[RMDB]
RNA sequence: GGGAACGACUCGAGUAGAGUCGAAAAGCGUACUACUUAGCUUUUGACGCUGUCGCACAGGGAGAAGCUCCCAAAUAGGAGCUUCGACGAUCUGUGAAGUCAGCGAUAAGCUAAGUAUCGCAAAACUUAGGCAAGACCUUCGGGUCUUGCCUAAGAAGGAUUCCCUUACGUUCGCGUAAGGGAAUCCAAAAGAAACAACAACAACAAC
Reactivity to 2A3 in 0.01 (KOAc 150mM, MgCl2 10mM, bicine 150mM(pH8.5), 24C), signal-to-noise 2, nucleotides 027 to 156: g000c020g050u130a110c020u000a000c000u070u010a000g030c000u030u040u080u080g150a100c060g000c000u010g000u030c000g000c040a000c000a000g000g020g010a010g010a030a000g000c030u050c030c070c000a170a300a050u300a100g020g000a000g010c000u000u020c020g020a140c010g000a000u000c020u000g030u000g010a140a070g000u000c000a000g000c000g020a040u050a050a000g000c000u000a000a000g000u000a000u060c000g000c010a000a050a000a050c000u010u000a000g000g010c030a000a000g000a010c010c000u050u190c300g010g010g000u020c000u000u000g010c000c000u000a000a000g000a000a000
This 207-nucleotide RNA was probed chemically with 2A3.
The data come from the RNA Mapping Database (RMDB), library RNAMAK.